[RMDB]
RNA sequence: GGGAACGACUCGAGUAGAGUCGAAAACUAGAGUUACACGUUCCUGAUCUCCUCUGACUAUGAGCGUGCAGAGUGGAGGGAGAACAUCCGGGAGCAGCAGAAGAAGUGUGAGUAUCCUCUGUCCUGACCCUUCCGAAGAUUUCGAUCUUCGGAAGGGAAAAGAAACAACAACAACAAC
Reactivity to 2A3 in 0.01 (KOAc 150mM, MgCl2 10mM, bicine 150mM(pH8.5), 24C), signal-to-noise 2, nucleotides 027 to 126: c010u000a000g010a010g050u100u180a080c070a010c080g050u040u030c030c010u020g040a080u060c040u040c030c020u050c020u020g070a080c020u070a060u280g100a040g100c100g070u110g090c040a010g000a000g040u080g010g040a070g020g010g000a140g000a060a060c030a080u000c060c020g000g000g060a040g000c000a000g000c000a000g030a100a000g040a060a010g060u050g020u040g100a050g010u070a060u070c020c000u030c040u030g070u040c000c000u000g060a090
Reactivity to DMS in 0.01 (KOAc 150mM, MgCl2 10mM, bicine 150mM(pH8.5), 24C), signal-to-noise 1, nucleotides 027 to 126: c050u000a080g000a060g010u000u000a180c100a220c110g000u010u000c000c020u000g000a120u000c040u000c090c020u000c070u000g000a030c120u010a070u010g020a020g020c190g000u000g030c040a040g000a080g070u050g000g000a000g000g000g000a110g010a060a090c040a070u000c100c020g000g010g000a070g010c090a120g000c070a070g010a050a070g010a070a090g030u010g000u000g000a100g000u000a080u000c090c050u000c060u000g050u020c030c010u000g000a290